[RMDB]
RNA sequence: GGGAACGACUCGAGUAGAGUCGAAAAUCCGACUCUCAUAGGCUCUCCAACCCAACUCCUACUCAAUACGUCCUCGUCGUACAGAACGGUAACAUGUUUUCCGAACAUCCGCGCUUCGGUAUACGAGAAAGGCGUAGAUUAUUCGUAAUCUACGCAACGCACAAACCUUAUUCGUAAGGUUUGUGCGAAAAGAAACAACAACAACAAC
Reactivity to DMS in 0.01 (KOAc 150mM, MgCl2 10mM, bicine 150mM(pH8.5), 24C), signal-to-noise 1, nucleotides 027 to 156: u000c040c010g000a080c040u000c000u000c010a150u000a120g010g030c000u000c000u000c020c040a110a160c000c010c050a090a080c030u010c010c030u030a060c040u000c050a060a120u010a070c050g040u000c000c000u000c010g040u000c060g050u010a070c040a080g010a050a130c000g000g000u000a070a130c070a120u000g010u000u010u000u000c090c040g010a050a040c080a090u010c050c040g010c020g010c070u000u000c000g040g050u000a090u000a010c020g010a100g050a050a070a060g050g030c020g030u000a020g040a010u000u000a050u000u000c290g040u010a010a020u000c000u000a000c000g010c000a020a020
Reactivity to 2A3 in 0.01 (KOAc 150mM, MgCl2 10mM, bicine 150mM(pH8.5), 24C), signal-to-noise 4, nucleotides 027 to 156: u040c020c010g040a020c020u020c000u030c070a110u100a180g060g000c010u030c010u010c030c020a050a060c030c000c020a030a040c020u020c020c020u050a060c020u050c090a050a100u080a160c070g020u020c010c000u020c000g040u030c030g010u020a050c030a040g050a060a010c000g050g020u110a090a030c030a090u100g020u050u060u070u060c060c040g000a010a010c000a070u060c060c060g040c020g010c090u020u010c010g030g020u050a020u020a030c030g000a010g070a080a070a030g080g000c000g000u000a000g000a000u000u020a020u040u070c130g030u030a000a000u000c000u010a000c010g010c000a030a000